[RMDB]
RNA sequence: GGGAACGACUCGAGUAGAGUCGAAAAAAAGUUAGCGUACUAGAGUCGCCGUGAGUACGCUAUGGUUCCGUGAGACUCUACUCGAGCGUAUCACGGAACCCACGUACAUACCGUACGAGCUAUAAAAACUUACCCUAACUUUCGAGUUAGGGUAAGUAAAAGAAACAACAACAACAAC
Reactivity to 2A3 in 0.01 (KOAc 150mM, MgCl2 10mM, bicine 150mM(pH8.5), 24C), signal-to-noise 4, nucleotides 027 to 126: a000a010a000g080u030u010a000g000c000g020u010a010c000u020a020g100a080g190u120c040g040c090c020g120u090g050a000g010u000a000c010g010c000u000a020u020g030g010u040u040c020c020g020u050g020a050g010a000c000u000c010u010a010c020u000c020g000a000g000c000g000u020a050u050c020a010c010g030g010a020a050c000c020c010a040c030g020u020a010c010a080u130a200c060c060g000u000a000c010g010a040g020c060u130a070u200a260a100a060a030
Reactivity to DMS in 0.01 (KOAc 150mM, MgCl2 10mM, bicine 150mM(pH8.5), 24C), signal-to-noise 4, nucleotides 027 to 126: a070a040a080g000u000u000a020g000c010g030u000a010c000u000a120g000a120g010u000c040g030c030c030g020u010g000a040g000u000a010c000g000c000u000a010u000g010g010u010u000c030c030g010u000g010a200g000a050c010u000c010u000a010c010u000c020g000a010g010c040g000u000a060u010c050a100c050g010g000a080a050c010c020c040a120c030g020u000a010c020a120u000a080c200c160g000u010a020c000g010a140g020c140u000a100u000a040a050a050a070